[RMDB]
RNA sequence: GGGAACGACUCGAGUAGAGUCGAAAAGAUAUGGAUUCCCAACCUCCAACAGCUUAAUCGGAAACGAUUAAGACAUGGAGUGUUGGAAUCCUAAGUCAAAGCAGCCCUUAGUUCGCUAAGGGCUGCAUCUGUCACAUCAGUUCGCUGAUGUGACAGAAAAAGAAACAACAACAACAAC
Reactivity to 2A3 in 0.01 (KOAc 150mM, MgCl2 10mM, bicine 150mM(pH8.5), 24C), signal-to-noise 2, nucleotides 027 to 126: g050a010u060a070u210g000g000a000u030u070c080c020c010a010a000c000c020u040c000c010a130a100c040a170g060c010u000u020a000a010u020c000g080g020a120a060a040c000g010a010u000u000a000a000g050a010c010a010u110g030g040a010g110u260g010u020u000g000g000a000a000u010c000c000u030a180a030g080u040c080a200a000a080g050c010a000g000c000c000c000u000u010a020g020u030u080c300g020c240u010a000a000g020g000g020c030u010g000c000a000
Reactivity to DMS in 0.01 (KOAc 150mM, MgCl2 10mM, bicine 150mM(pH8.5), 24C), signal-to-noise 3, nucleotides 027 to 126: g020a050u010a300u000g000g000a010u010u000c150c040c020a020a020c000c010u000c000c010a040a080c300a240g000c010u010u010a010a010u010c000g000g000a180a070a230c000g000a010u000u000a010a000g010a050c150a200u000g000g010a000g000u000g020u000u000g000g000a020a010u000c000c000u010a020a110g020u000c070a110a100a100g000c000a020g000c010c000c000u000u000a010g020u000u030c300g030c000u000a030a000g000g000g020c000u000g000c000a020
Source: RMDB library TTRDES, as collected in RNAgym.
This 177-nucleotide RNA was probed chemically with 2A3 and DMS.
The RNA was probed in 150 mM KOAc, 10 mM MgCl2 and 150 mM bicine (pH 8.5) at 24 C.
The DMS profile rests on 1,987 reads.
DMS (dimethyl sulfate) methylates the pairing face of unpaired adenines and cytosines.
For DMS the reverse transcriptase was MarathonRT.